This 177-nucleotide RNA was probed chemically with DMS and 2A3. It was measured as part of the RMDB library M2PK50. For DMS the reverse transcriptase was MarathonRT. 2A3 adducts were read by reverse transcription with SuperScript II with manganese.
RNA sequence: GGGAACGACUCGAGUAGAGUCGAAAAGGUCACCUCUUCGGAGGUGACCAAAAUACCGCCCGAACGGCUUCCUGACCCGGCGGAAAAACUAAAACAGGAGCAAAACCCGACUGUUCGCAGUCGGGAAUCAUGUGUAAAAGUUCGCUUUUACACAUGAAAAAGAAACAACAACAACAAC
Reactivity to DMS in 0.01 (KOAc 150mM, MgCl2 10mM, bicine 150mM(pH8.5), 24C), signal-to-noise 3, nucleotides 027 to 126: g010g000u000c000a040c000c000u010c010u010u020c190g060g040a010g010g040u010g010a010c000c000a010a020a050a090u000a110c040c050g020c040c020c220g010a100a100c160g000g000c030u000u000c000c000u000g010a290c090c020c090g010g000c020g000g000a040a060a060a120a110c090u000a010a040a060a060c040a030g000g010a040g030c170a070a080a080a160c010c000c000g000a010c010u000g000u000u010c270g020c000a020g020u010c000g020g000g000a010a020
Reactivity to 2A3 in 0.01 (KOAc 150mM, MgCl2 10mM, bicine 150mM(pH8.5), 24C), signal-to-noise 1, nucleotides 027 to 126: g000g000u000c000a000c040c000u020c000u030u130c230g040g000a000g000g010u000g000a000c000c010a000a000a000a000u010a000c000c030g010c000c030c010g020a070a030c060g070g000c030u110u030c030c000u030g050a080c020c000c000g030g020c020g020g000a120a090a020a020a010c030u070a010a010a030a040c000a030g000g020a010g000c040a000a020a050a110c020c000c000g000a000c000u000g040u040u110c200g000c130a000g010u000c000g000g000g010a000a000